[RMDB]
RNA sequence: GGGAACGACUCGAGUAGAGUCGAAAAAAAAGAUAUGGAUACGGAACUACUCUUAAGACACCCUUGGACCUCUGCUCGGAAACGAGCAGAGCUAGGGUGUUGAAGGAGCCGUAUCCUAAGUCAAAAACAUCUAUAAUACCUUCGGGUAUUAUAGAUGAAAAGAAACAACAACAACAAC
Reactivity to DMS in 0.01 (KOAc 150mM, MgCl2 10mM, bicine 150mM(pH8.5), 24C), signal-to-noise 3, nucleotides 027 to 126: a030a060a120a070g000a030u000a300u000g000g010a010u010a000c000g000g000a100a030c040u010a300c020u000c000u000u000a070a300g010a010c000a000c000c000c000u010u010g020g020a170c300c010u000c000u000g010c000u000c000g010g010a110a070a130c010g010a000g010c000a000g000a010g030c030u010a020g020g010g010u010g000u000u000g010a250a050g020g000a000g000c000c010g010u000a000u000c000c000u000a010a070g000u000c040a070a060a080a150a170